[RMDB]
Structure probing data (2A3 and DMS) for a 207-nucleotide construct. The reactions ran in a buffer of 150 mM KOAc, 10 mM MgCl2 and 150 mM bicine (pH 8.5), at 24 C. The DMS profile rests on 2,112 reads. Reactivities are given for positions 27 through 156. Source: RMDB library OK3TST, as collected in RNAgym. For DMS the reverse transcriptase was MarathonRT.
RNA sequence: GGGAACGACUCGAGUAGAGUCGAAAAGAGCCGGUCAGCAUCUCGCAGCCCCGGAAGAUAACGUUGUCCACGUACGUGCUAAAGGGGGCGACUUCAAAUGCCUCCCCGAAGAGCUCUUGGAGGAUUCGGAAUCUCCCGAGGAAGGCCCGCUUCAGCAUACAAUAAUGCUAUUCGUAGCAUUAUUGUAAAAAGAAACAACAACAACAAC
Reactivity to 2A3 in 0.01 (KOAc 150mM, MgCl2 10mM, bicine 150mM(pH8.5), 24C), signal-to-noise 3, nucleotides 027 to 156: g040a020g010c020c060g020g000u080c050a100g020c030a120u060c060u140c220g060c040a040g020c020c020c000c000g030g000a020a010g010a040u090a080a020c030g060u090u060g070u100c010c020a030c030g060u080a020c090g020u030g020c020u080a060a000a050g000g010g000g010g040c010g050a070c000u200u100c070a100a090a160u210g000c000c000u070c000c000c010c010g080a110a020g030a020g090c020u030c030u070u050g070g000a080g020g000a020u090u020c010g000g030a030a050u020c030u010c020c000c000g010a010g010g010a060a030g010g010c000c030c020g020c010u070u050c040a070g030c020a040
Reactivity to DMS in 0.01 (KOAc 150mM, MgCl2 10mM, bicine 150mM(pH8.5), 24C), signal-to-noise 1, nucleotides 027 to 156: g000a140g000c020c000g010g030u000c030a130g030c050a160u000c030u000c070g000c080a160g050c050c060c020c030g030g000a040a100g030a100u000a060a300c080g030u000u000g000u000c030c070a130c130g020u010a070c110g020u000g010c020u000a080a050a120g000g020g010g020g050c020g020a060c050u000u050c100a040a070a160u000g000c010c030u000c020c030c020c070g000a180a110g000a080g010c040u000c040u000u000g020g000a090g010g010a170u000u000c040g000g000a120a130u000c010u010c010c010c000g030a030g020g030a130a060g000g000c000c010c010g000c000u000u000c080a070g010c050a300